The record gives the reactivity of an RNA of 177 nucleotides to DMS and 2A3.
Reactivities are given for positions 27 through 126.
Conditions: 150 mM KOAc, 10 mM MgCl2 and 150 mM bicine (pH 8.5), 24 C.
It was measured as part of the RMDB library OK1LIB.
RNA sequence: GGGAACGACUCGAGUAGAGUCGAAAAGCUAGGAGAGGAGAUCAUGUUAUACAGAGAAUCAAAUCCUAUUCAUUCCAUCUUGUAUUGGACCAUUAUUUGCUGCAAUCAAGUGUUAUCUCCCAUGAGGUAUGUAUGUCACGUUCGCGUGACAUACAUAAAAAGAAACAACAACAACAAC
Reactivity to DMS in 0.01 (KOAc 150mM, MgCl2 10mM, bicine 150mM(pH8.5), 24C), signal-to-noise 5, nucleotides 027 to 126: g010c160u010a030g020g010a020g020a100g000g010a070g000a110u020c030a100u010g010u010u030a120u070a230c040a020g010a120g010a070a140u010c050a040a100a090u010c000c010u000a030u020u000c080a100u000u010c060c010a060u020c050u000u000g000u040a050u000u000g010g000a030c230c040a050u010u020a040u030u010u000g020c170u000g000c020a030a010u000c010a040a030g010u000g010u000u010a050u010c030u000c000c040c030a070u030g010a080g020g000
Reactivity to 2A3 in 0.01 (KOAc 150mM, MgCl2 10mM, bicine 150mM(pH8.5), 24C), signal-to-noise 6, nucleotides 027 to 126: g080c060u070a010g010g060a080g060a020g070g040a060g010a050u070c020a060u040g100u180u130a140u090a130c060a020g160a020g090a170a060u040c030a050a060a150u030c000c020u020a060u050u130c040a030u110u000c030c020a040u040c010u060u040g020u090a040u020u070g020g040a030c010c010a040u090u070a130u210u210u110g040c060u040g040c000a010a050u030c010a080a000g040u020g050u150u050a110u030c040u040c030c000c010a080u140g060a040g070g090